[RMDB]
RNA sequence: GGGAACGACUCGAGUAGAGUCGAAAAAGAUGGUACGCCAUCAAGUCGGAGCCCGUCUUUCCAAUAUUUUGAAACCAGUACUCAUGCAAAUGGUUACAAAGUAUUCGAAAAGGCGUGCUCUGAGAAACUAUGGUGGCUAGUUCGCUAGCCACCAUAGAAAAGAAACAACAACAACAAC
Reactivity to 2A3 in 0.01 (KOAc 150mM, MgCl2 10mM, bicine 150mM(pH8.5), 24C), signal-to-noise 5, nucleotides 027 to 126: a000g000a000u000g000g010u040a040c300g050c030c010a000u010c050a030a000g150u010c010g000g000a000g000c010c030c000g000u000c000u000u010u020c000c010a000a000u000a020u000u000u000u000g050a050a020a000c000c000a010g090u140a100c110u180c150a120u260g060c060a100a090a110u070g010g000u000u000a020c000a000a020a000g010u010a000u000u020c030g000a010a070a020a020g000g000c000g000u000g000c000u000c000u000g000a010g010a020a040a000